[RMDB]
RNA sequence: GGGAACGACUCGAGUAGAGUCGAAAAAGACAAUCUGUUUGUCAAUGAUGCCAACAUUAUUUCGAUGGUGUUGUCGGUUGGUGCUGCAGCAGAUGUUGUGGAAGGUUCGCCUUCUUUUGAAGCAGUCCUAGCACUCUAACUUCGGUUAGAGUGCUAGAAAAGAAACAACAACAACAAC
Reactivity to 2A3 in 0.01 (KOAc 150mM, MgCl2 10mM, bicine 150mM(pH8.5), 24C), signal-to-noise 1, nucleotides 027 to 126: a040g060a000c020a050a050u020c010u040g060u120u260u120g090u070c000a010a130u110g020a020u090g030c000c020a010a010c010a140u050u130a070u030u300u040c070g100a020u120g000g170u100g040u070u070g040u040c060g000g000u050u040g060g020u060g050c060u000g040c000a040g010c020a000g030a120u060g030u090u140g060u020g000g050a050a000g120g000u000u020c080g080c030c010u000u130c090u130u110u020u110g090a150a060g030c030a000g050u050c000
Reactivity to DMS in 0.01 (KOAc 150mM, MgCl2 10mM, bicine 150mM(pH8.5), 24C), signal-to-noise 2, nucleotides 027 to 126: a140g000a040c060a040a040u010c090u000g010u010u000u010g010u000c030a090a060u010g000a110u010g000c050c010a030a040c020a050u010u010a070u000u000u020c160g030a050u000g010g010u000g000u000u000g020u000c010g000g020u000u010g000g000u010g010c100u010g010c030a060g010c040a020g000a040u000g010u000u020g020u000g000g020a020a010g010g020u000u010c250g020c030c010u000u010c010u000u000u000u000g010a110a080g010c090a110g000u010c150